[RMDB]
RNA sequence: GGGAACGACUCGAGUAGAGUCGAAAAACUUUGUGCCACCACAACCGACGCGCAGUUAACGCCCCCGGCAGCGGUGGAAAAUCCAUCUUUGAUAGAGGAGGUUGUGUUAUCGGGCUGACCAUGUCGGUCAGCUGCCCCGAUUCGUCGGGGCAGCUGAAAAAGAAACAACAACAACAAC
Reactivity to DMS in 0.01 (KOAc 150mM, MgCl2 10mM, bicine 150mM(pH8.5), 24C), signal-to-noise 1, nucleotides 027 to 126: a070c090u000u010u010g030u010g030c040c000a150c140c000a050c080a060a070c020c040g000a120c130g000c070g010c060a040g020u020u000a070a150c080g010c010c010c020c010c020g000g010c050a050g020c080g000g000u000g000g000a080a000a120a190u000c020c000a070u000c010u000u010u000g000a130u020a040g010a120g000g010a110g040g000u000u000g010u000g000u000u010a080u000c120g040g010g000c030u000g040a020c040c010a150u010g000u010c100g000g000
Structure probing data (DMS) for a 177-nucleotide construct. Values cover nucleotides 27 to 126. The DMS profile rests on 1,137 reads. In probing experiments dimethyl sulfate is read out at A N1 and C N3, which are open when not base-paired.